[RMDB]
RNA sequence: GGGAACGACUCGAGUAGAGUCGAAAAGGCCAUGUUCAUCUAAGGAGGAUUUAUAAACACAGAUUCUAAAAUGAACCUAAUUAUUAAUACAGCUAAUAAUUUGUGUUUCAGCUAAAUAUUAUGAGUGUAAUGAAUGGUUAAAGAAAACGAUUAUUCAAAUGAACGCUAUUUUCGAAUAGCGUUCAUUAAAAGAAACAACAACAACAAC
Reactivity to 2A3 in 0.01 (KOAc 150mM, MgCl2 10mM, bicine 150mM(pH8.5), 24C), signal-to-noise 1, nucleotides 027 to 156: g070g000c000c000a020u030g070u030u000c010a090u000c020u070a040a020g040g000a020g020g000a030u040u150u040a200u060a030a110a000c010a010c000a070g030a020u140u000c010u110a060a070a110a090u070g000a020a010c000c000u020a030a030u050u000a020u000u050a060a000u190a300c070a060g010c030u000a010a000u010a020a020u020u000u010g040u000g010u000u080u000c010a010g000c000u060a030a060a060u180a100u100u120a030u090g060a030g160u030g010u050a040a060u050g020a010a010u030g000g090u030u050a140a050a030g150a000a030a020a020c060g040a020u090u070a110u280u220c070a010
Reactivity to DMS in 0.01 (KOAc 150mM, MgCl2 10mM, bicine 150mM(pH8.5), 24C), signal-to-noise 2, nucleotides 027 to 156: g040g040c000c040a060u000g000u000u000c060a100u000c040u000a130a110g020g030a090g020g010a130u010u010u010a110u000a070a070a110c080a070c010a080g010a020u000u000c020u000a040a070a050a140u010g030a040a020c010c020u000a040a050u010u030a040u010u010a040a180u010a160c080a160g020c070u000a000a010u000a020a030u000u000u010g010u000g000u010u010u000c060a150g020c060u010a050a040a080u000a110u000u000a110u000g000a080g040u000g020u030a080a080u010g010a040a030u010g010g010u000u000a020a060a090g000a080a100a140a090c130g000a110u010u020a130u000u000c050a130